This 177-nucleotide RNA was probed chemically with 2A3 and DMS.
[RMDB]
RNA sequence: GGGAACGACUCGAGUAGAGUCGAAAAGGUCUAAGGGUAAAUAUGCAGAUUUGUUGGGUUUAGUCCUUGUUCCAUUUGUGAGGUUCUUCCAAUAUGGGAACGUACUUCAGGCUUAGCCCUUUUUACCAUAAUAUAUGAGUUUCGACUCAUAUAUUAUAAAAGAAACAACAACAACAAC
Reactivity to 2A3 in 0.01 (KOAc 150mM, MgCl2 10mM, bicine 150mM(pH8.5), 24C), signal-to-noise 3, nucleotides 027 to 126: g030g010u020c010u030a000a040g100g060g020u080a050a100a090u270a150u220g010c050a040g100a290u200u120u190g160u120u120g030g050g020u070u070u120a060g040u050c010c000u040u080g020u020u030c010c020a020u020u090u080g160u090g020a070g080g120u190u060c040u070u020c000c000a060a080u130a080u260g060g030g010a030a000c020g000u030a020c000u030u060c020a020g060g000c030u000u020a000g000c000c000c040u000u030u000u000u050a040c010c000
Reactivity to DMS in 0.01 (KOAc 150mM, MgCl2 10mM, bicine 150mM(pH8.5), 24C), signal-to-noise 9, nucleotides 027 to 126: g010g010u000c020u000a020a040g000g010g010u000a040a060a080u010a060u010g010c090a110g000a120u010u000u010g010u000u000g000g010g010u000u000u010a070g010u010c020c020u000u010g010u000u010c050c040a090u000u000u000g010u010g010a030g010g010u000u000c080u010u000c020c010a070a100u010a070u000g010g000g010a020a030c080g010u000a020c060u000u000c070a090g010g010c030u000u000a050g000c050c000c000u000u010u000u010u000a100c050c030